RNA sequence: GGGAACGACUCGAGUAGAGUCGAAAAGAAACAAAGGAACUAGAAAUCACGGUGUUUACCUUGGAGCAACCUACAAUCUAGUUGCAUAGGAAAGAACCCAUUUGACACAAUGAGAGUAACAAAAACAACGAAUGCAGUUGACAUUGGAAUGGGCUGGUACCCUCAGGCUAUUCGUAGCCUGAGGGUAAAAAGAAACAACAACAACAAC
Reactivity to 2A3 in 0.01 (KOAc 150mM, MgCl2 10mM, bicine 150mM(pH8.5), 24C), signal-to-noise 2, nucleotides 027 to 156: g060a000a000a020c040a010a090a070g170g000a010a050c010u070a040g010a020a160a040u160c080a050c090g000g000u030g010u050u000u110a170c040c060u060u120g060g050a100g030c030a040a120c010c000u080a020c040a040a040u010c000u040a020g000u020u020g000c000a020u030a070g080g040a030a000a060g010a000a020c000c000c010a020u010u020u080g060a020c010a000c020a060a060u030g020a040g000a010g140u100a100a010c090a020a070a030a000a000c010a050a000c040g020a150a090u180g030c040a000g020u020u010g040a020c010a020u060u080g010g000a000a010u010g010g000g000c030u040g050g050
Reactivity to DMS in 0.01 (KOAc 150mM, MgCl2 10mM, bicine 150mM(pH8.5), 24C), signal-to-noise 2, nucleotides 027 to 156: g050a120a060a110c030a050a140a060g020g070a110a090c050u000a110g010a060a160a170u000c110a070c170g010g000u000g000u000u000u000a050c030c030u010u020g010g020a230g000c030a050a140c120c020u010a100c080a100a140u000c120u000a080g000u000u050g000c040a100u010a090g050g000a060a030a100g000a050a080c000c000c000a050u000u000u010g010a290c070a140c030a030a060u000g020a080g000a140g000u010a030a150c110a020a060a030a040a080c050a080a060c030g000a050a120u000g020c050a080g020u020u040g000a120c040a050u000u000g020g010a020a050u000g000g020g020c000u000g020g010